This 177-nucleotide RNA was probed chemically with 2A3 and DMS.
Source: RMDB library OK2TRN, as collected in RNAgym.
The DMS profile rests on 8,429 reads.
For 2A3 the reverse transcriptase was SuperScript II with manganese.
In probing experiments dimethyl sulfate is read out at A N1 and C N3, which are open when not base-paired.
RNA sequence: GGGAACGACUCGAGUAGAGUCGAAAAGCCGUAAUCGGCCGUAGCAUCGGCUAGCAUUAGCAUCGAUGCCGUAGCAUUAGCGCAUUAUACGCGUAGCCGUAAUUAAUAUAUAUGCUACGUACGCGUAACACACUCAGGAAUUCGUUCCUGAGUGUGUAAAAGAAACAACAACAACAAC
Reactivity to 2A3 in 0.01 (KOAc 150mM, MgCl2 10mM, bicine 150mM(pH8.5), 24C), signal-to-noise 5, nucleotides 027 to 126: g030c000c000g050u090a170a170u190c060g020g000c020c020g060u050a020g020c000a010u020c010g030g000c010u020a020g040c080a260u190u070a010g020c010a040u160c050g000a010u010g000c000c010g070u060a010g010c020a080u000u110a030g030c030g000c050a030u080u160a080u160a140c080g000c030g010u030a010g060c050c030g030u020a040a040u070u090a110a040u100a010u030a000u000a010u210g010c010u000a010c000g020u020a030c070g020c000g070u070a070
Reactivity to DMS in 0.01 (KOAc 150mM, MgCl2 10mM, bicine 150mM(pH8.5), 24C), signal-to-noise 6, nucleotides 027 to 126: g020c020c010g010u020a110a130u000c020g010g010c020c110g010u000a080g020c010a010u000c000g010g000c000u000a020g020c210a110u010u000a020g020c020a110u000c040g010a010u000g000c010c080g010u010a040g010c020a060u010u010a090g010c100g020c090a130u010u010a110u000a060c040g010c000g010u000a070g010c100c050g010u010a060a130u000u010a090a050u000a150u000a090u010a030u010g010c010u000a010c010g010u000a030c130g020c080g000u010a070
Values cover nucleotides 27 to 126.